[RMDB]
RNA sequence: GGGAACGACUCGAGUAGAGUCGAAAAAGGAUGAUAGUAGCCAUUUCGCUGGAAUAUGUAUCGGGUUUAAAAGAUGGCAUAGUUCGAAACAUUUUCGCACAAGAUUCUAACUGUCUUCGAACGUCGAACCACGCAUAGUGUUCGCACUAUGCGUGGUAAAAGAAACAACAACAACAAC
Reactivity to DMS in 0.01 (KOAc 150mM, MgCl2 10mM, bicine 150mM(pH8.5), 24C), signal-to-noise 2, nucleotides 027 to 126: a120g000g030a070u000g010a070u010a010g010u000a070g000c070c070a050u020u010u050c130g000c070u040g010g060a120a100u010a050u040g010u010a110u020c050g010g000g010u010u000u010a030a050a090a070g020a040u020g000g010c130a080u020a070g000u000u020c020g020a040a010a030c070a050u020u010u010u030c080g000c100a100c180a070a100g010a070u030u030c050u000a080a030c050u030g000u020c030u000u000c050g000a040a040c030g000u010c110g000a160
Reactivity to 2A3 in 0.01 (KOAc 150mM, MgCl2 10mM, bicine 150mM(pH8.5), 24C), signal-to-noise 3, nucleotides 027 to 126: a000g200g010a050u070g030a000u100a080g180u110a000g020c000c000a030u050u060u080c140g030c040u100g000g060a140a120u090a020u200g060u110a100u010c040g030g000g010u000u200u180a090a060a000a000g060a080u080g000g000c030a000u120a060g040u010u010c010g000a020a010a040c000a010u050u040u120u170c010g080c080a030c010a120a050g020a050u070u070c030u110a070a240c030u080g000u010c030u000u000c020g050a060a040c000g010u020c000g070a010
Annotation: Chemical mapping of a 177-nucleotide RNA with DMS and 2A3. For DMS the reverse transcriptase was MarathonRT.